[RMDB]
RNA sequence: GGGAACGACUCGAGUAGAGUCGAAAAUCGAAAUCAUCGGGAGUGAUCCAGAUGACGGUCCUGCCAUGAGACCGCAACGAGAGCAUGUCGCAACGAAUGGACUCGGGGAGUCGGCAGCUUGCCCCACUAAGGCAGACGUUGUUCGCAACGUCUGCAACAAAACAAACCGGUUCGCCGGUUUGUUUUGAAAAGAAACAACAACAACAAC
Reactivity to DMS in 0.01 (KOAc 150mM, MgCl2 10mM, bicine 150mM(pH8.5), 24C), signal-to-noise 1, nucleotides 027 to 156: u010c060g000a050a090a060u010c000a020u000c000g000g060g010a080g010u020g010a210u000c010c040a060g000a030u000g010a050c020g020g010u010c010c010u000g000c030c070a180u010g000a110g000a060c050c020g020c030a090a150c020g000a080g000a090g000c030a170u000g010u020c070g000c100a120a180c080g020a160a100u000g000g010a140c100u000c030g000g000g020g010a130g020u010c010g040g000c010a070g000c030u000u000g050c050c010c020c030a060c120u020a140a130g000g030c010a020g000a020c000g010u010u000g010u000u000c280g000c030a050a010c030g000u000c000u000g000c000a020a020
Reactivity to 2A3 in 0.01 (KOAc 150mM, MgCl2 10mM, bicine 150mM(pH8.5), 24C), signal-to-noise 2, nucleotides 027 to 156: u060c010g010a040a000a040u030c010a000u010c010g040g000g010a040g030u150g020a090u000c020c010a040g010a020u010g010a030c010g000g000u020c010c010u030g110c030c010a130u140g010a040g010a110c000c020g020c040a030a070c030g010a010g000a010g080c080a110u070g030u110c020g030c060a080a000c030g080a060a080u130g030g050a070c060u010c070g020g000g020g030a060g050u090c010g010g000c000a000g020c030u060u070g020c010c000c000c000a040c060u110a080a060g130g010c000a000g000a000c000g000u020u000g010u050u090c160g000c100a000a000c000g000u000c000u010g000c000a000a010